[RMDB]
RNA sequence: GGGAACGACUCGAGUAGAGUCGAAAAUCUGACGUUGCAUGGAGUCUAUGUCUGGACCUUCUCCAUUUCCUCUUUCAAGAGAAUGUGAGCAUUGAAGGAUUCGGACAUAGCCUUCAUGCAUGCUAGAGAUUCCCUGUAUCUUCGGAUACAGGGAAUCAAAAGAAACAACAACAACAAC
Reactivity to 2A3 in 0.01 (KOAc 150mM, MgCl2 10mM, bicine 150mM(pH8.5), 24C), signal-to-noise 2, nucleotides 027 to 126: u040c010u040g070a040c110g100u040u010g020c000a000u000g010g000a010g000u020c000u020a000u020g010u000c000u000g030g020a010c000c000u020u030c020u020c010c010a010u000u060u070c030c030u040c030u080u300u140c160a200a050g000a020g000a020a010u040g040u130g050a060g070c160a210u140u230g020a030a020g040g060a210u010u020c020g000g000a000c000a000u000a000g000c010c000u000u000c000a020u000g000c000a000u000g000c000u030a020g010a010
Reactivity to DMS in 0.01 (KOAc 150mM, MgCl2 10mM, bicine 150mM(pH8.5), 24C), signal-to-noise 1, nucleotides 027 to 126: u000c040u020g020a070c070g000u000u000g000c000a020u000g000g000a000g020u010c000u000a020u000g000u010c000u000g000g000a010c000c000u000u000c010u020c040c000a010u010u020u010c120c000u000c010u000u000u000c300a110a060g000a020g010a030a000u000g010u010g030a110g010c300a120u010u030g000a010a000g010g000a180u000u000c000g010g000a030c000a030u000a000g000c060c000u000u000c000a000u000g000c000a000u000g000c010u000a020g000a280
An RNA of 177 nucleotides, treated with 2A3 and DMS and read out base by base.
For DMS the reverse transcriptase was MarathonRT.
2A3 adducts were read by reverse transcription with SuperScript II with manganese.
It was measured as part of the RMDB library RFMREP.
Conditions: 150 mM KOAc, 10 mM MgCl2 and 150 mM bicine (pH 8.5), 24 C.